Source: RMDB library OK3TST, as collected in RNAgym. This 207-nucleotide RNA was probed chemically with 2A3 and DMS. The RNA was probed in 150 mM KOAc, 10 mM MgCl2 and 150 mM bicine (pH 8.5) at 24 C. For DMS, 13,930 sequencing reads were counted. For 2A3, 6,859 sequencing reads were counted.
RNA sequence: GGGAACGACUCGAGUAGAGUCGAAAAAAUGACAACUCAUGGGCAUUUGGAGAACGCACCAGGCCCACGCUCAACAUUGCAUUUGAUUCCUGCGAGCGCUCAACAAGGGAAGCACCAGACAGAUGCUGAAAUUUAGGCAUGGCAGCACUGCUUUGCAUAAUUAUCACCAUUUCGAUGGUGAUAAUUAAAAAGAAACAACAACAACAAC
Reactivity to 2A3 in 0.01 (KOAc 150mM, MgCl2 10mM, bicine 150mM(pH8.5), 24C), signal-to-noise 8, nucleotides 027 to 156: a000a000u120g070a080c070a070a030c060u070c120a090u060g000g000g020c040a090u090u110u200g060g010a090g040a190a060c100g010c070a050c020c010a010g030g000c010c010c000a010c030g020c010u080c030a040a110c020a140u050u120g000c030a020u000u020u130g070a080u080u070c010c000u030g020c050g030a030g020c030g010c030u070c080a030a180c020a070a070g040g010g030a040a020g010c020a040c040c010a020g090a090c020a020g060a090u040g000c010u050g050a060a150a170u160u180u090a060g050g020c030a020u050g040g000c020a010g030c020a030c080u030g010c010u060u070u060g020c020a030
Reactivity to DMS in 0.01 (KOAc 150mM, MgCl2 10mM, bicine 150mM(pH8.5), 24C), signal-to-noise 5, nucleotides 027 to 156: a050a030u000g000a070c010a030a060c030u000c050a090u010g010g010g030c020a110u000u000u000g030g030a220g000a090a100c110g020c060a150c020c000a050g020g020c010c000c020a030c100g020c050u000c030a030a060c050a050u000u000g010c070a170u000u000u000g010a160u000u000c010c000u000g010c100g010a090g010c030g020c040u010c040a050a090c050a060a100g020g000g020a060a070g010c020a040c040c020a120g010a110c080a070g000a070u000g000c020u010g010a050a070a160u010u000u010a090g000g020c030a070u000g020g000c020a080g010c060a080c060u010g010c010u000u000u000g020c070a170